About this RNA
This 177-nucleotide RNA was probed chemically with 2A3. The data come from the RNA Mapping Database (RMDB), library RFM100. Reactivities are given for positions 27 through 126.
[RMDB]
RNA sequence: GGGAACGACUCGAGUAGAGUCGAAAAGCGGUCAUGUCGUAAUUAGCGGAGCACGGCAUUGCCGGCGAUAAUUAAUGACGGUGGUCACGUUGGUUUCAUGUCGAUUUCAUUUCAUGACACGGCCGAAGACCUAUUGCUCCUUCGGGAGCAAUAGGUCAAAAGAAACAACAACAACAAC
Reactivity to 2A3 in 0.01 (KOAc 150mM, MgCl2 10mM, bicine 150mM(pH8.5), 24C), signal-to-noise 2, nucleotides 027 to 126: g000c010g010g030u000c050a060u040g000u010c010g000u000a210a200u020u180a120g120c070g050g000a060g060c030a000c100g000g000c040a050u000u010g000c000c000g050g080c000g000a030u100a180a160u300u080a120a140u240g000a000c010g250g040u260g190g010u090c060a000c000g010u000u000g000g000u000u190u240c160a000u000g000u000c000g030a010u030u030u030c050a120u010u000u010c120a050u170g000a000c010a050c060g020g070c000c070g000a070a030